[RMDB]
RNA sequence: GGGAACGACUCGAGUAGAGUCGAAAAGACUGGCUGGCACGGUACCGUUCAAGCCAGAGUACCUCAUCCAUAGCCAGAAGUGCAUAUCGUUUUUUUUUUUUACGAUAUGCGCAAGGAUGAAAUUAGAGGGUUGCGAGGACUUCGGUUUUCGCAACCCAAAAGAAACAACAACAACAAC
Reactivity to 2A3 in 0.01 (KOAc 150mM, MgCl2 10mM, bicine 150mM(pH8.5), 24C), signal-to-noise 7, nucleotides 027 to 126: g090a020c000u000g000g010c010u020g010g020c100a020c060g080g160u230a200c170c070g010u030u060c070a070a000g000c000c000a000g000a000g010u040a060c000c000u010c000a010u000c000c010a070u060a070g150c030c030a090g070a240a040g030u010g010c000a000u000a000u000c000g000u000u000u000u000u020u000u000u020u020u020u000u040a000c000g000a000u010a000u000g000c010g000c000a010a020g010g000a000u030g020a030a030a070u170u140a120g060a110
Reactivity to DMS in 0.01 (KOAc 150mM, MgCl2 10mM, bicine 150mM(pH8.5), 24C), signal-to-noise 5, nucleotides 027 to 126: g000a090c000u000g000g000c000u000g010g030c210a050c030g010g010u070a120c190c030g030u030u000c050a090a040g020c010c000a010g000a050g010u010a160c010c010u000c010a010u010c000c000a130u020a100g000c190c150a090g000a150a140g000u000g000c000a000u000a000u000c010g010u010u010u000u000u000u000u000u030u010u030u020u000a020c000g000a000u000a000u000g000c000g000c000a060a040g000g000a010u000g020a030a080a090u030u010a070g020a300
Chemical mapping of a 177-nucleotide RNA with 2A3 and DMS.
Conditions: 150 mM KOAc, 10 mM MgCl2 and 150 mM bicine (pH 8.5), 24 C.
The 2A3 profile rests on 9,583 reads.
For DMS the reverse transcriptase was MarathonRT.